RNA sequence: GGGAACGACUCGAGUAGAGUCGAAAAACUUGACGUCACCGGAGCCGUGCGCCUGCGACGGAUUCAGGUUGCCCUCGAACUCGGUGAAGAUCUGCGAGUACGGCUUGCCGACGAUGUUGGCCAGCACCGUGAAGGGUGAUUUCGAUCACCCUUCACGAAAAGAAACAACAACAACAAC
Reactivity to DMS in 0.01 (KOAc 150mM, MgCl2 10mM, bicine 150mM(pH8.5), 24C), signal-to-noise 1, nucleotides 027 to 126: a050c030u010u000g000a060c090g010u010c010a020c000c070g000g010a060g040c070c130g010u000g010c030g060c020c000u010g000c100g020a080c090g000g020a190u000u000c030a030g000g000u000u000g010c020c070c000u000c100g020a070a110c050u000c010g000g000u010g010a060a050g000a070u010c040u000g010c010g000a070g030u010a070c130g010g000c010u010u000g010c000c010g020a010c060g000a100u020g030u010u000g010g010c020c040a030g020c040a120c130
Reactivity to 2A3 in 0.01 (KOAc 150mM, MgCl2 10mM, bicine 150mM(pH8.5), 24C), signal-to-noise 1, nucleotides 027 to 126: a000c040u000u100g030a020c000g040u010c020a000c010c070g080g020a010g000c080c070g110u180g020c050g000c000c000u010g000c050g110a080c030g080g120a070u060u040c000a010g060g080u100u230g060c040c060c000u050c060g060a070a040c020u010c030g030g020u060g030a000a070g060a190u060c030u110g010c000g030a030g020u030a020c030g080g000c000u010u030g010c020c020g010a020c030g090a140u300g020u000u030g000g000c000c010a000g000c000a030c000